[RMDB]
RNA sequence: GGGAACGACUCGAGUAGAGUCGAAAAGGAUCUGAGUACUUAUAAGUGCGAAGUGAGUGAGGGUCUUACGAGCACAAAUUACAUCCCUCUAUUAAGUAUCGAAGAUCGGCCGGAGAUCGAGAUACAACUAUUAACCGGCGACUGUACGAAGAUCCGAAUAUACGAGUAGGUUCGCCUACUCGUAUAUAAAAGAAACAACAACAACAAC
Reactivity to DMS in 0.01 (KOAc 150mM, MgCl2 10mM, bicine 150mM(pH8.5), 24C), signal-to-noise 3, nucleotides 027 to 156: g020g040a010u000c010u000g010a300g010u000a000c010u040u000a100u010a040a190g040u010g020c010g000a120a210g030u010g010a080g020u010g010a080g000g010g010u000c050u000u000a050c050g010a300g020c020a100c030a040a070a070u000u000a130c100a080u000c000c000c000u000c030u000a190u000u000a040a110g010u000a020u000c000g000a230a170g010a040u000c000g010g010c060c040g020g010a280g000a040u000c030g010a300g000a040u010a010c030a080a070c100u000a130u000u000a080a150c000c010g000g020c010g000a170c120u000g010u000a040c050g000a170a090g010a050u000c010c000g000a110
Reactivity to 2A3 in 0.01 (KOAc 150mM, MgCl2 10mM, bicine 150mM(pH8.5), 24C), signal-to-noise 5, nucleotides 027 to 156: g010g010a000u000c000u010g010a010g030u010a010c020u040u130a110u060a300a090g000u010g010c000g020a050a020g020u010g000a000g010u100g000a010g000g020g030u100c000u010u000a000c000g010a020g040c020a030c030a020a170a110u170u080a080c040a120u130c010c030c010u000c020u010a160u130u230a150a060g000u000a000u010c000g020a060a010g010a020u000c010g030g000c000c000g010g010a070g000a010u010c010g000a010g000a070u000a010c000a030a000c020u070a040u300u030a120a040c000c000g000g010c000g060a070c070u080g000u010a000c000g010a010a010g000a000u010c000c000g000a000